[RMDB]
RNA sequence: GGGAACGACUCGAGUAGAGUCGAAAAGUCGCCGCAUCUACAUCAACGCCCAGCGCGGGCGAGGGAGGCAUCCUACGGGGGUGACCCAUUCGCCGGCAUGGUAGAGGACGGCAAGAUUGCCUCGACGAUAGCGGUACGAUUUCGAUCGUACCGCUAUAAAAGAAACAACAACAACAAC
Reactivity to DMS in 0.01 (KOAc 150mM, MgCl2 10mM, bicine 150mM(pH8.5), 24C), signal-to-noise 2, nucleotides 027 to 126: g010u010c060g020c030c000g030c070a200u000c030u000a040c050a130u000c110a130a150c070g000c060c010c040a080g010c190g040c020g000g000g000c000g000a010g000g000g010a080g000g000c010a020u000c010c000u000a140c240g020g020g000g020g010u000g000a100c000c010c000a200u000u000c020g010c020c000g010g000c030a080u000g000g020u000a090g000a090g000g000a220c020g000g010c030a080a050g020a070u000u020g000c020c030u000c030g020a080c170g000
Structure probing data (DMS) for a 177-nucleotide construct. The reactions ran in a buffer of 150 mM KOAc, 10 mM MgCl2 and 150 mM bicine (pH 8.5), at 24 C. It was measured as part of the RMDB library OK2TRN.